The data come from the RNA Mapping Database (RMDB), library OK2TRN. Chemical mapping of a 177-nucleotide RNA with 2A3 and DMS. 2A3 adducts were read by reverse transcription with SuperScript II with manganese. The 2A3 profile rests on 3,739 reads. The reactions ran in a buffer of 150 mM KOAc, 10 mM MgCl2 and 150 mM bicine (pH 8.5), at 24 C.
[RMDB]
RNA sequence: GGGAACGACUCGAGUAGAGUCGAAAACAUUGGUAGACACACAUUUUGUUUAUCCAUCUCUCUGCCAGUAGACACUUGGGUUGCCUCCACCUUUUGGCUGUUGUGAAUAAUGUUGGCAGGAACAUGGCCAUCUAUCCCUAUUCGUAGGGAUAGAUGGAAAAGAAACAACAACAACAAC
Reactivity to 2A3 in 0.01 (KOAc 150mM, MgCl2 10mM, bicine 150mM(pH8.5), 24C), signal-to-noise 3, nucleotides 027 to 126: c040a060u090u140g040g000u070a020g030a030c020a010c010a020c080a160u020u090u100u180g040u020u040u020a080u070c030c000a050u000c050u000c010u010c010u060g020c000c000a010g010u030a040g030a020c010a010c030u040u090g050g020g020u060u050g020c000c010u050c020c010a090c040c020u090u150u070u170g050g000c040u020g050u150u040g050u040g060a090a060u180a110a080u140g020u060u030g030g030c080a020g010g010a020a000c040a030u040g040g020
Reactivity to DMS in 0.01 (KOAc 150mM, MgCl2 10mM, bicine 150mM(pH8.5), 24C), signal-to-noise 6, nucleotides 027 to 126: c080a080u010u010g020g010u010a040g010a030c050a050c170a100c170a100u000u000u010u000g010u000u000u000a060u010c020c030a040u000c090u010c030u000c030u010g010c010c020a060g010u000a070g010a110c050a030c050u000u010g000g020g010u000u000g000c050c010u000c040c040a120c060c040u000u000u000u000g010g020c050u000g010u000u000g010u000g010a090a080u010a070a090u000g010u010u000g000g010c030a020g010g000a050a040c110a040u000g010g010